[RMDB]
RNA sequence: GGGAACGACUCGAGUAGAGUCGAAAAGCGUACUACAGCGGGAAAGUAGAGCUUGGAUUUAUACACAUGCGAUCCCAAAUAGGAUCGCGGGUGUAUUGUCAGCUCUAUAACACGCUGUAUCGCAAAACAUUCUGUACCGUUCGCGGUACAGAAUGAACUAGUAUGAAGACUUCGGUCUUCAUACUAGAAAAGAAACAACAACAACAAC
Reactivity to DMS in 0.01 (KOAc 150mM, MgCl2 10mM, bicine 150mM(pH8.5), 24C), signal-to-noise 2, nucleotides 027 to 156: g040c000g060u010a090c060u000a030c000a010g050c010g010g010g000a040a140a300g030u000a020g010a030g000c010u000u000g040g000a010u000u000u000a040u000a000c000a000c000a080u000g010c000g020a030u010c010c000c010a090a180a250u010a050g020g010a010u000c000g040c000g000g000g040u000g000u000a000u000u000g010u000c000a040g030c000u010c000u000a010u000a050a300c050a060c000g000c010u000g000u000a010u000c010g000c030a100a060a090a170c010a030u000u010c010u000g020u000a010c040c010g020u000u010c300g040c030g020g040u020a010c000a020g010a000a000u000g000a040a200
Reactivity to 2A3 in 0.01 (KOAc 150mM, MgCl2 10mM, bicine 150mM(pH8.5), 24C), signal-to-noise 5, nucleotides 027 to 156: g010c000g050u100a040c040u000a010c010a010g000c020g000g030g050a080a130a090g030u010a010g000a000g010c020u100u130g100g000a020u030u300u060a010u030a010c000a000c000a010u020g000c000g010a010u030c000c030c030a170a300a220u280a110g000g000a000u010c000g000c000g010g000g000u000g000u000a010u000u010g010u000c000a000g000c000u000c010u000a000u020a010a020c030a010c000g000c000u010g000u000a010u120c010g000c020a020a050a010a030c000a000u000u010c000u000g010u000a000c030c000g020u020u050c290g010c010g110g000u000a010c000a000g000a000a000u000g000a010a000